[RMDB]
RNA sequence: GGGAACGACUCGAGUAGAGUCGAAAAUGAUCGAGAGAUCUAACGAUGUACGCGAGUCAACGGCACAGACUCGAGCGAAAGCUCGGUCGAAAGACCGCGUACAUCGGUCGGCAAGUGUCAAGUCAAACAUUACGAUGCCUUUCGAGGCAUCGUAAUGAAAAGAAACAACAACAACAAC
Reactivity to DMS in 0.01 (KOAc 150mM, MgCl2 10mM, bicine 150mM(pH8.5), 24C), signal-to-noise 4, nucleotides 027 to 126: u010g020a020u000c000g000a280g010a200g000a010u000c010u010a100a100c010g020a010u000g010u010a000c000g020c000g000a050g000u000c000a030a110c150g000g020c020a040c060a280g000a010c010u010c000g030a000g010c000g000a140a100a200g020c000u000c000g000g010u010c000g000a060a070a180g000a000c010c000g000c010g000u010a000c000a010u000c000g000g000u000c110g000g010c030a060a090g020u010g000u000c030a090a140g010u000c040a090a110a210
Reactivity to 2A3 in 0.01 (KOAc 150mM, MgCl2 10mM, bicine 150mM(pH8.5), 24C), signal-to-noise 2, nucleotides 027 to 126: u110g010a010u000c000g010a010g000a010g000a140u000c020u010a050a040c010g010a000u010g000u000a000c020g000c000g030a030g020u020c020a090a080c130g080g000c030a030c000a050g030a010c010u050c100g000a000g000c010g060a100a010a000g020c020u000c010g020g000u000c010g010a000a000a010g000a000c010c000g000c000g000u010a010c000a000u000c000g010g000u060c040g010g040c020a100a120g030u040g000u120c040a040a000g020u050c050a110a040a000